[RMDB]
About this RNA:
This 177-nucleotide RNA was probed chemically with 2A3. It was measured as part of the RMDB library OK1LIB. Reactivities are rounded to 0.1 and cut off at 0 and 3. Reactivities are given for positions 27 through 126.
RNA sequence: GGGAACGACUCGAGUAGAGUCGAAAACGGGCCCUUGAGGGGGCGGUGACCACGUCGGCGGCGACGUCCUCGUCGAGCGUACCGACGGGCGGCACACCUAUCACGUGACUGGCCGUCAGGAGCUCGGGAGAUUCGUCAACUUCGGUUGACGAAUCUCAAAAGAAACAACAACAACAAC
Reactivity to 2A3 in 0.01 (KOAc 150mM, MgCl2 10mM, bicine 150mM(pH8.5), 24C), signal-to-noise 1, nucleotides 027 to 126: c010g000g080g040c000c000c000u040u030g160a170g000g000g000g000g070c000g000g090u070g070a210c000c000a080c110g170u210c060g010g110c100g000g010c000g060a040c000g010u110c020c010u120c050g050u030c000g000a070g000c000g070u100a090c000c000g000a000c000g000g010g000c000g000g050c000a030c000a000c140c000u260a190u300c050a070c130g000u010g300a300c000u000g060g080c000c000g040u030c000a050g000g080a040g000c000u000c000g000g040